[RMDB]
RNA sequence: GGGAACGACUCGAGUAGAGUCGAAAAGCAGGAAUAAGGUCCUGGACUGAGGAAAAUUGUUCAAAUCUUGUUCGUUUUAUUGAAAAUUAAUUCACAAAUGAGUUUUUCAGUUGAAAAGACGUUUGGAAGUCCUUUUACCUUUCGAGGUAAAAGGACUAAAAGAAACAACAACAACAAC
Reactivity to 2A3 in 0.01 (KOAc 150mM, MgCl2 10mM, bicine 150mM(pH8.5), 24C), signal-to-noise 1, nucleotides 027 to 126: g090c020a000g070g000a030a030u170a240a040g040g060u000c000c020u030g000g010a070c060u060g010a090g100g010a180a030a110a100u130u020g000u000u040c040a020a010a000u000c020u010u000g050u000u000c010g010u000u130u000u070a090u030u040g010a080a000a000a000u130u050a070a080u050u020c030a040c040a080a000a110u110g020a090g200u000u000u000u000u000c030a050g060u040u010g110a000a040a060a060g010a010c000g000u000u000u030g040g010a000
Reactivity to DMS in 0.01 (KOAc 150mM, MgCl2 10mM, bicine 150mM(pH8.5), 24C), signal-to-noise 2, nucleotides 027 to 126: g020c060a040g010g000a060a100u030a040a100g010g000u010c040c110u000g000g020a060c020u010g030a120g010g010a090a060a070a090u040u030g000u010u030c080a050a080a060u020c080u000u000g030u010u000c070g000u000u000u040u000a090u050u020g000a000a060a150a100u000u090a070a030u020u000c030a100c020a020a020a040u000g000a140g030u000u000u000u020u000c000a130g060u000u070g000a010a010a000a080g010a010c040g010u010u010u000g020g000a050